[RMDB]
RNA sequence: GGGAACGACUCGAGUAGAGUCGAAAAGAUAUGGAGAUGAGACAUGCCUGAUGGUCGGAAACGACCAAAGGGCAACAGCUAUCUCCUAAGUCAAACACAAAAUCUCCCUUCGGGGAGAUUUUGUGAACUUCUAUCAUUAGUUCGCUAAUGAUAGAAGAAAAGAAACAACAACAACAAC
Reactivity to DMS in 0.01 (KOAc 150mM, MgCl2 10mM, bicine 150mM(pH8.5), 24C), signal-to-noise 4, nucleotides 027 to 126: g010a030u000a300u000g010g010a010g000a010u000g000a090g020a070c120a180u000g000c000c000u000g000a300u000g000g030u000c000g010g000a050a070a190c010g010a000c000c000a010a020a300g000g000g020c000a000a010c170a080g010c030u010a030u010c000u000c000c010u000a040a090g010u000c040a100a070a270c000a010c010a000a000a000a010u000c000u000c000c000c000u000u010c160g030g010g010g010a000g000a000u000u000u000u000g020u000g000a080a100
Reactivity to 2A3 in 0.01 (KOAc 150mM, MgCl2 10mM, bicine 150mM(pH8.5), 24C), signal-to-noise 1, nucleotides 027 to 126: g020a030u080a060u180g000g000a020g000a000u120g050a030g010a090c050a070u090g020c000c010u020g020a030u010g010g000u010c010g000g000a080a090a070c020g000a010c000c000a000a010a000g000g000g000c000a000a010c010a000g020c000u000a000u000c010u010c010c020u000a110a010g030u010c030a070a150a070c010a010c000a030a000a010a010u000c000u030c000c000c000u000u070c280g050g000g010g000a000g000a000u010u000u020u000g010u010g010a000a000

About this RNA:
Chemical mapping of a 177-nucleotide RNA with DMS and 2A3. Conditions: 150 mM KOAc, 10 mM MgCl2 and 150 mM bicine (pH 8.5), 24 C. The data come from the RNA Mapping Database (RMDB), library TTRDEL. For 2A3, 5,590 sequencing reads were counted.